[RMDB]
RNA sequence: GGGAACGACUCGAGUAGAGUCGAAAAGUCGUCGCUCGACGAAGGCCGGUGAGCAGAAGGCUUAGCGGAUCCCCUCGCGGCAAGACGCCCGGAACCGCGAUAAAGAACUCGCCGCCGAGCCCGCGCCGAAUAUUGACUUGUUCGCAAGUCAAUAUUCAAAAGAAACAACAACAACAAC
Reactivity to 2A3 in 0.01 (KOAc 150mM, MgCl2 10mM, bicine 150mM(pH8.5), 24C), signal-to-noise 2, nucleotides 027 to 126: g040u020c000g020u030c040g040c240u180c220g020a030c000g000a040a020g000g020c060c040g030g010u010g010a120g000c080a060g080a160a030g120g010c000u010u020a020g000c010g000g000a100u070c000c020c000c030u120c100g040c040g030g000c020a090a080g130a150c090g000c010c010c000g000g010a020a050c010c000g000c010g020a030u080a100a130a010g040a060a040c000u010c040g010c010c020g030c010c020g030a020g000c000c020c020g030c020g000c020c050
Reactivity to DMS in 0.01 (KOAc 150mM, MgCl2 10mM, bicine 150mM(pH8.5), 24C), signal-to-noise 2, nucleotides 027 to 126: g000u000c020g010u010c050g000c080u010c060g010a010c000g010a140a080g000g030c030c030g010g020u000g000a090g010c030a080g010a140a110g020g010c060u010u010a180g020c010g000g000a080u000c030c040c060c090u020c180g010c050g020g020c050a140a140g000a220c080g030c010c090c120g000g010a040a060c030c020g000c000g000a110u000a040a060a100g000a110a070c050u000c050g010c000c010g000c020c000g010a100g000c000c000c120g010c050g040c100c070